RNA sequence: GGGAACGACUCGAGUAGAGUCGAAAAUAUACCGAAAACACGUAUCUGGAAACUCCAGACACGCAUGUGGUAUACAAACCAGGCAAGGAUGAUGCAAGUUCUGAAAUUAACCUGGUUCAGCAGUCCAUGCCCAAUAGACCCAACUAUAUUGGGUUCAACUCAUCCAAACGUUCGCGUUUGGAUGAGUAAAAGAAACAACAACAACAAC
Reactivity to 2A3 in 0.01 (KOAc 150mM, MgCl2 10mM, bicine 150mM(pH8.5), 24C), signal-to-noise 1, nucleotides 027 to 156: u070a000u000a000c000c010g050a090a070a000a130c040a010c010g010u000a040u020c010u010g010g000a270a210a040c120u000c000c000a000g020a000c020a000c020g130c100a090u060g030u070g060g010u010a000u010a010c070a000a070a040c000c010a020g010g010c030a040a090g040g040a040u090g030a010u060g080c140a210a080g060u110u050c020u080g080a040a080a060u150u020a100a130c000c020u040g040g000u060u040c040a060g090c000a000g020u010c090c010a090u130g000c000c000c000a040a010u020a030g010a020c000c000c060a040a030c090u070a000u080a170u300u030g000g000g000u010u030c000a000